[RMDB]
An RNA of 177 nucleotides, treated with DMS and 2A3 and read out base by base.
The DMS profile rests on 1,640 reads.
2A3 adducts were read by reverse transcription with SuperScript II with manganese.
It was measured as part of the RMDB library TTRDES.

RNA sequence: GGGAACGACUCGAGUAGAGUCGAAAAGAUAUGGACGUGUACUUGAGGCUUGGAUUUACGAUCGGAAACGAUCGUUGUCAGCCUCGUACUGCGUCCUAAGUCAGCCCCAGUGCUUCGGCACUGGGAACUCAUGUUCGUCGUUCGCGACGAACAUGAGAAAAGAAACAACAACAACAAC
Reactivity to DMS in 0.01 (KOAc 150mM, MgCl2 10mM, bicine 150mM(pH8.5), 24C), signal-to-noise 2, nucleotides 027 to 126: g000a050u010a300u020g010g000a010c000g010u000g020u010a020c050u010u010g050a000g010g000c010u000u020g020g020a030u010u020u000a000c000g000a000u010c000g000g010a120a030a300c010g000a010u000c010g010u020u000g000u000c000a070g010c010c000u000c000g050u000a000c010u010g050c010g010u000c000c000u000a050a100g020u010c020a300g020c170c000c000c020a020g000u000g010c000u000u000c280g040g020c010a020c000u000g000g000g010a000a010
Reactivity to 2A3 in 0.01 (KOAc 150mM, MgCl2 10mM, bicine 150mM(pH8.5), 24C), signal-to-noise 3, nucleotides 027 to 126: g010a040u100a030u210g000g000a010c030g020u040g000u040a040c070u160u300g010a020g020g070c080u220u300g290g030a110u300u270u300a000c020g020a010u000c010g060g020a060a070a070c030g030a020u010c000g000u000u000g030u010c000a000g000c000c040u020c000g000u000a000c020u000g020c000g010u000c010c000u010a020a010g040u010c040a060g050c050c000c010c010a000g010u000g000c010u050u210c300g110g000c000a000c000u000g000g000g010a040a030